[RMDB]
RNA sequence: GGGAACGACUCGAGUAGAGUCGAAAAGAAACAGGCCGAAGGAAAUAUGGCGUAACGGCCUGACAAGGCUCGUAAAGAAAAGACGCCAUAUAGAAAAGAAAGAAUGAGCCAAACGCCAUAUUUCAAAGCAUAUGCUCAUAUUCGUAUGAGCAUAUGCAAAAGAAACAACAACAACAAC
Reactivity to DMS in 0.01 (KOAc 150mM, MgCl2 10mM, bicine 150mM(pH8.5), 24C), signal-to-noise 2, nucleotides 027 to 126: g010a080a000a160c020a000g000g000c020c000g030a300a040g020g000a000a050a000u000a000u000g020g010c000g010u040a020a120c040g000g000c000c000u000g000a070c060a100a020g000g010c040u020c010g010u020a080a160a220g000a110a080a100a090g020a080c060g040c110c040a050u020a050u030a040g020a050a070a130a030g000a100a090a060g000a060a050u040g000a000g020c000c000a120a070a040c000g000c000c000a000u000a000u000u000u000c000a040a110a240
Reactivity to 2A3 in 0.01 (KOAc 150mM, MgCl2 10mM, bicine 150mM(pH8.5), 24C), signal-to-noise 2, nucleotides 027 to 126: g040a010a090a000c010a000g000g000c030c000g040a090a020g130g000a010a040a000u010a000u000g000g010c000g010u090a050a020c000g000g020c010c000u000g000a020c050a070a040g000g000c000u010c020g040u100a090a080a060g060a080a130a000a030g050a060c050g000c020c000a000u050a000u060a100g060a040a080a020a020g070a020a100a000g080a030a160u180g000a000g000c010c000a050a050a000c000g000c000c000a000u000a000u000u000u000c020a010a010a010